This 177-nucleotide RNA was probed chemically with 2A3 and DMS. For 2A3 the reverse transcriptase was SuperScript II with manganese. DMS adducts were read by reverse transcription with MarathonRT. Reactivities are given for positions 27 through 126.
[RMDB]
RNA sequence: GGGAACGACUCGAGUAGAGUCGAAAAGCGCUGGUCCAGUCAGCUGCCAGAUGCGUAUUUGCAAUCACCUCCGAAUAUCGGACGGUGGUCCCAGGAUACUGGAUCUGAUAACGAACACGUCCACGGGCAACAUGUCGAUCUUCGGAUCGACAUGUUGAAAAGAAACAACAACAACAAC
Reactivity to 2A3 in 0.01 (KOAc 150mM, MgCl2 10mM, bicine 150mM(pH8.5), 24C), signal-to-noise 2, nucleotides 027 to 126: g020c020g000c030u020g000g000u000c020c000a000g070u020c020a010g000c040u100g050c030c000a050g010a070u020g050c040g000u180a230u040u180u190g030c000a030a020u010c000a010c010c010u000c010c000g060a270a050u190a300u300c020g030g000a030c120g070g000u010g000g010u050c020c000c000a040g080g000a080u060a160c010u000g000g050a020u000c050u050g090a100u040a240a110c140g020a080a020c020a010c110g030u000c030c010a080c120g040g040g020
Reactivity to DMS in 0.01 (KOAc 150mM, MgCl2 10mM, bicine 150mM(pH8.5), 24C), signal-to-noise 2, nucleotides 027 to 126: g010c100g000c020u000g030g020u000c040c010a080g030u000c070a110g000c050u010g020c020c050a110g020a080u000g030c030g000u000a050u000u000u000g000c160a110a060u000c000a010c010c010u000c000c000g010a180a170u000a180u000c020g000g010a010c150g030g000u000g010g010u000c030c060c000a170g000g000a070u000a010c000u010g010g000a080u000c060u010g030a120u010a050a110c140g000a050a060c130a070c160g020u000c000c010a100c060g010g000g010